RNA sequence: GGGAACGACUCGAGUAGAGUCGAAAAAAAGGUUAAACUGCCCACUCGAAAGAAACAAACUUUGACUAGCUAGUCGCGUUUUAAUAUGCGUUACGGCAUAGCCGCUACCGAUUACGCUUACAUAUGGUUUUGCCGUAAUAGUGUCUUCGGUGUAAACACUAUCACCGGAGUUCGCUCCGGUGAUAGUAAAAGAAACAACAACAACAAC
Reactivity to 2A3 in 0.01 (KOAc 150mM, MgCl2 10mM, bicine 150mM(pH8.5), 24C), signal-to-noise 1, nucleotides 027 to 156: a000a010a000g070g010u030u010a090a000a090c070u090g000c010c020c060a020c060u140c020g030a080a030a000g000a000a190a020c070a100a000a000c050u150u110u290g040a000c000u000a000g130c000u010a030g090u030c000g000c010g010u040u040u040u040a190a290u110a090u290g000c000g010u020u110a000c030g000g040c000a060u030a000g030c010c000g110c070u080a030c000c070g160a130u100u230a100c070g010c100u160u080a030c060a270u270a100u070g010g000u030u130u210u100g060c030c000g030u000a060a060u070a040g000u000g000u070c010u000u000c030g000g000u060g000u060a040a130a000c010